[RMDB]
RNA sequence: GGGAACGACUCGAGUAGAGUCGAAAAUACGAGACAAAGAGGUACACUAAGAUGUACGCCGAGAAGCGAUUCAUCAACACGAUAAUAGAUCAUGGAGCAAACAUUAACGCGGUUACGAAAAUAGGAAAUACGCCGUUACACACUUACCUUCAAGAGCCUAUUCGGACCCUUUCGAGGGUCCGAAUAGAAAAGAAACAACAACAACAAC
Reactivity to 2A3 in 0.01 (KOAc 150mM, MgCl2 10mM, bicine 150mM(pH8.5), 24C), signal-to-noise 1, nucleotides 027 to 156: u240a060c080g000a000g020a050c120a000a110a000g070a040g000g020u070a000c060a010c070u190a080a020g000a040u020g010u060a000c020g020c000c090g190a060g060a110a000g000c000g230a260u120u050c010a010u030c000a020a080c050a010c120g080a060u050a170a000u030a060g050a040u000c040a110u130g060g000a050g040c030a010a080a000c000a040u110u040a020a000c130g050c000g000g140u090u120a030c070g160a080a090a040a040u140a110g100g100a010a010a010u110a100c010g020c000c060g040u010u060a040c090a000c040a040c070u020u120a110c000c020u020u000c040a030a120g070a000g060c000
This 207-nucleotide RNA was probed chemically with 2A3. The data come from the RNA Mapping Database (RMDB), library OK3TST.